Chemical mapping of a 207-nucleotide RNA with 2A3. Values cover nucleotides 27 to 156. 2A3 adducts were read by reverse transcription with SuperScript II with manganese. For 2A3, 925 sequencing reads were counted.
[RMDB]
RNA sequence: GGGAACGACUCGAGUAGAGUCGAAAAGCAUUAAGAGAGUACUCUUAUUCCCACAACGUUGGUGACAACGUUGAUUUUCCGGUGGCCACCCGCCCGGGCCACCGUUACUCCACUCCACUCCUUCGGGACUGGUUUGGAGGAACACGCCAGGGCUAAAGUGGAUUUACUGAUUCGUCAGUAAAUCCACAAAAGAAACAACAACAACAAC
Reactivity to 2A3 in 0.01 (KOAc 150mM, MgCl2 10mM, bicine 150mM(pH8.5), 24C), signal-to-noise 1, nucleotides 027 to 156: g020c050a070u080u100a030a020g020a010g030a050g190u160a200c010u000c000u030u030a000u040u020c000c000c000a000c000a010a000c000g000u000u010g000g070u100g060a030c020a010a000c010g000u010u000g040a030u050u030u100u150c070c030g000g000u000g000g030c010c000a020c030c120c060g000c000c010c010g030g000g000c000c000a000c000c000g000u000u050a000c000u000c000c000a000c000u020c000c000a010c000u000c000c010u050u060c200g030g000g010a010c010u010g020g000u020u000u000g000g000a000g000g010a000a050c110a020c070g100c100c080a080g000g000g020c030u030a050a040a000